[RMDB]
Background:
The data come from the RNA Mapping Database (RMDB), library M2PK50. The record gives the reactivity of an RNA of 177 nucleotides to 2A3 and DMS.
RNA sequence: GGGAACGACUCGAGUAGAGUCGAAAAGAAUCGCAGUUCGCUGCGAUUCAAAUAAAAUCAGCGGUAAGGAGGCGUAAAAUAUUACCGCUGAACGCCUCCAUAAAACUACGUCCUUCGGGACGUAGAAGUAGUGAAUCACGUUCGCGUGAUUCACUACAAAAGAAACAACAACAACAAC
Reactivity to 2A3 in 0.01 (KOAc 150mM, MgCl2 10mM, bicine 150mM(pH8.5), 24C), signal-to-noise 2, nucleotides 027 to 126: g000a000a000u000c000g040c000a000g010u050u070c110g040c140u000g010c000g000a000u000u010c000a010a010a000u080a000a010a000a030u050c020a000g040c000g000g040u070a110a080g060g030a020g070g000c060g070u080a000a090a060a130u140a050u030u110a000c000c010g000c010u000g000a000a000c010g000c010c010u050c000c020a070u200a040a100a000a020c010u000a000c000g000u020c000c000u020u060c180g080g020g000a010c000g020u010a000g000a000a020
Reactivity to DMS in 0.01 (KOAc 150mM, MgCl2 10mM, bicine 150mM(pH8.5), 24C), signal-to-noise 1, nucleotides 027 to 126: g010a010a000u000c000g030c000a020g010u000u000c290g010c020u010g010c000g000a030u010u010c000a010a110a080u010a090a060a100a100u010c030a020g020c000g000g030u000a080a050g020g010a070g000g020c100g000u010a080a020a060a060u000a150u000u010a050c000c000g000c030u000g010a040a020c170g000c020c010u040c140c020a160u000a080a090a020a120c000u000a000c000g010u000c000c000u000u020c230g000g000g000a000c000g040u000a000g010a010a070

The DMS profile rests on 943 reads. For 2A3, 2,354 sequencing reads were counted.